[RMDB]
RNA sequence: GGGAACGACUCGAGUAGAGUCGAAAAAGGAGCGAGAAGAAUGGCUCAGGGCGCUGAGUGGAGAGGCGCGGCAGGCGGCGGAACGCGUGAUCUCCGAAGGAUCGCGUUUUUUCCGGCUCAAUGUGUAACUAGGCUCAGUUUUCGAACUGAGCCUAGUAAAAGAAACAACAACAACAAC
Reactivity to 2A3 in 0.01 (KOAc 150mM, MgCl2 10mM, bicine 150mM(pH8.5), 24C), signal-to-noise 2, nucleotides 027 to 126: a020g140g000a030g010c090g030a040g020a170a030g120a000a090u160g070g000c020u020c020a030g010g030g000c070g000c070u050g040a070g040u100g080g010a060g000a060g040g000c020g000c000g030g050c020a030g030g000c020g000g050c010g010g000a030a070c030g010c000g000u030g030a030u000c090u020c070c100g120a070a040g010g000a000u010c000g000c000g010u000u000u000u000u000u110c010c000g020g000c030u020c030a070a120u130g040u030g020u090a070
Reactivity to DMS in 0.01 (KOAc 150mM, MgCl2 10mM, bicine 150mM(pH8.5), 24C), signal-to-noise 4, nucleotides 027 to 126: a060g000g000a040g010c020g010a070g020a100a080g000a110a050u020g000g000c040u000c020a100g000g010g000c030g000c040u020g010a130g010u000g040g010a060g000a100g000g000c060g030c060g000g010c050a030g000g020c100g000g020c060g000g000a020a040c300g000c000g000u000g010a020u000c000u020c030c270g000a120a260g000g000a010u000c000g000c010g000u000u000u010u000u020u010c010c000g020g000c050u000c090a090a080u040g000u010g010u020a080
The data come from the RNA Mapping Database (RMDB), library OK1LIB. This 177-nucleotide RNA was probed chemically with 2A3 and DMS. For DMS, 6,210 sequencing reads were counted. DMS adducts were read by reverse transcription with MarathonRT. The reactions ran in a buffer of 150 mM KOAc, 10 mM MgCl2 and 150 mM bicine (pH 8.5), at 24 C.